[RMDB]
RNA sequence: GGGAACGACUCGAGUAGAGUCGAAAAGGGGUCUUAACCCGUCUAGCUUGAGGAGGCUGAAGCCUCCACGGCUACCCACCCUCAAGAACUACUAGACGAGGUUAAGACGGAGGCACCCAAAGCAACGUCACUCUACUUCGGUAGAGUGACGUUGCAACCCUAAGCAUGACUUCGGUCAUGCUUAGGGAAAAGAAACAACAACAACAAC
Reactivity to 2A3 in 0.01 (KOAc 150mM, MgCl2 10mM, bicine 150mM(pH8.5), 24C), signal-to-noise 1, nucleotides 027 to 156: g000g010g060g000u000c000u000u000a000a000c000c000c010g000u000c000u000a000g000c000u040u070g000a010g000g030a040g020g080c100u140g120a140a010g000c000c000u130c240c180a050c130g000g040c000u050a000c030c030c000a090c010c000c000u020c000a000a050g000a110a110c150u200a030c010u020a300g000a000c010g040a240g010g000u000u000a000a000g000a000c000g000g030a020g030g030c080a120c000c000c020a090a050a010g010c000a000a000c000g010u010c000a000c010u030c000u000a050c110u120u150c300g030g000u000a000g000a000g000u000g000a000c000g000u000u000g000c000a000a000